[RMDB]
RNA sequence: GGGAACGACUCGAGUAGAGUCGAAAAUACUAAUUUACUUGUUAGUUAUGUGAUGUAUAACACAAACGAAGAAACUUAUUUGGAAGUACAUGCUCAUAAAGUUAUUUGUGUCGUUUAUCCACAGGAAAAUCAUAGCAAGAAACGAAAAAUUGAAGAAAACUCGUACAGUAUUCGUACUGUACGAGUUAAAAGAAACAACAACAACAAC
Reactivity to DMS in 0.01 (KOAc 150mM, MgCl2 10mM, bicine 150mM(pH8.5), 24C), signal-to-noise 2, nucleotides 027 to 156: u010a120c020u020a070a060u000u050u000a110c060u010u000g050u000u010a030g010u010u000a070u010g000u010g000a160u000g000u010a060u000a060a090c030a090c010a020a040a100c030g020a100a110g020a160a140a130c030u000u000a090u000u000u010g000g020a080a230g000u010a060c110a100u010g030c090u000c010a090u000a060a040a130g020u000u000a180u000u000u020g040u000g000u000c040g020u000u010u000a050u010c040c010a020c090a000g000g010a120a020a060a140u010c060a070u000a050g010c070a010a070g000a020a060a060c040g010a090a050a060a110a130u000u010g000a120a230g000a150a070
Reactivity to 2A3 in 0.01 (KOAc 150mM, MgCl2 10mM, bicine 150mM(pH8.5), 24C), signal-to-noise 2, nucleotides 027 to 156: u040a000c010u040a010a100u100u140u060a060c020u010u060g010u040u000a090g000u070u040a040u170g010u010g000a050u050g040u040a070u080a150a010c040a000c070a100a110a000c030g030a040a040g080a060a220a000c020u030u050a070u190u110u050g060g000a040a020g010u050a100c000a040u130g080c000u020c040a030u080a120a200a000g030u050u090a140u040u050u020g040u000g000u010c030g000u010u070u020a080u040c030c020a010c000a040g150g090a000a130a010a000u120c010a060u050a040g000c000a010a010g010a080a070a010c020g080a060a040a000a110a050u040u020g000a020a000g020a100a090